Chemical mapping of a 207-nucleotide RNA with 2A3 and DMS. Source: RMDB library ARCHII, as collected in RNAgym. For DMS the reverse transcriptase was MarathonRT. The 2A3 profile rests on 1,809 reads. The RNA was probed in 150 mM KOAc, 10 mM MgCl2 and 150 mM bicine (pH 8.5) at 24 C. 2A3 adducts were read by reverse transcription with SuperScript II with manganese.
RNA sequence: GGGAACGACUCGAGUAGAGUCGAAAAGCGAAAUGGCGGCCUCGGCCCCCACCUUUGCUCGCAUGCCCAGCCGAGUAGGCCGCGGUCAGCGCCGGCUUCCACGCCAGUGUGGGGCUUGAUGCUGUCGCGAAGAGUUCGUCUCUGUCAGCCUGGCAGGCCUUGAUAGUAACUUCGGUUACUAUCAAGGAAAAGAAACAACAACAACAAC
Reactivity to 2A3 in 0.01 (KOAc 150mM, MgCl2 10mM, bicine 150mM(pH8.5), 24C), signal-to-noise 3, nucleotides 027 to 156: g040c010g030a050a050a040u080g010g010c040g000g000c010c050u080c170g070g010c000c000c000c000c010a060c020c030u110u060u180g040c040u030c030g050c030a050u140g010c000c000c010a010g010c030c010g040a050g130u150a060g060g020c000c010g030c000g020g040u200c010a010g010c000g000c010c020g010g000c000u300u080c040c010a050c060g080c090c180a120g010u080g000u080g160g020g010g010c000u040u230g010a040u040g000c010u010g010u000c010g000c000g010a040a010g050a000g010u080u140c090g080u040c070u000c000u040g070u050c000a020g080c030c050u040g010g000c010a020g010g020
Reactivity to DMS in 0.01 (KOAc 150mM, MgCl2 10mM, bicine 150mM(pH8.5), 24C), signal-to-noise 2, nucleotides 027 to 156: g000c020g040a050a050a070u000g000g010c130g070g010c020c020u010c220g070g000c010c000c030c030c040a020c100c040u010u000u000g020c050u000c030g050c060a190u000g010c030c010c020a150g000c000c000g020a140g030u000a210g030g010c000c020g020c020g050g040u000c040a050g020c030g010c010c020g030g020c010u000u000c020c010a030c060g000c100c220a150g000u030g030u020g010g010g030g030c000u000u000g030a040u010g010c000u000g000u000c000g000c020g010a110a030g000a050g000u010u000c100g010u000c010u000c000u000g010u000c070a150g030c030c020u010g000g020c000a150g020g000